RNA sequence: GGGAACGACUCGAGUAGAGUCGAAAAUUCAUUUACCGUAGGUAAGAUGCCUAACAAAUGGAUGAGCUCAGUUGUUUCAAGAGUUUGUCUCCCAUGAGCCAAUGCCCAUCACACACACACACACACACGAAUCAUAUUUCUUCGGAAAUAUGAUUCGAAAAGAAACAACAACAACAAC
Reactivity to DMS in 0.01 (KOAc 150mM, MgCl2 10mM, bicine 150mM(pH8.5), 24C), signal-to-noise 3, nucleotides 027 to 126: u000u000c020a010u000u000u010a080c210c220g000u000a000g000g020u000a100a130g010a190u010g010c010c000u000a070a030c190a030a060a050u000g000g010a020u000g010a130g000c010u000c040a080g010u000u000g010u000u000u010c040a110a110g000a050g010u000u010u000g000u000c110u000c010c030c010a110u000g020a100g020c020c030a060a080u010g020c040c020c010a060u010c040a030c050a040c050a020c030a020c050a040c040a000c040a050c050a040c140a140
Reactivity to 2A3 in 0.01 (KOAc 150mM, MgCl2 10mM, bicine 150mM(pH8.5), 24C), signal-to-noise 2, nucleotides 027 to 126: u010u020c010a000u020u020u100a100c080c080g010u030a010g000g040u050a150a160g100a290u270g000c000c000u030a050a030c050a010a040a020u060g020g020a030u010g040a020g020c030u010c030a050g040u030u010g060u060u110u040c050a050a050g020a000g030u000u090u170g010u040c050u010c000c010c010a080u100g050a010g020c000c010a040a030u080g000c000c030c010a000u060c020a010c020a010c010a000c000a000c020a010c000a030c010a040c000a010c020a020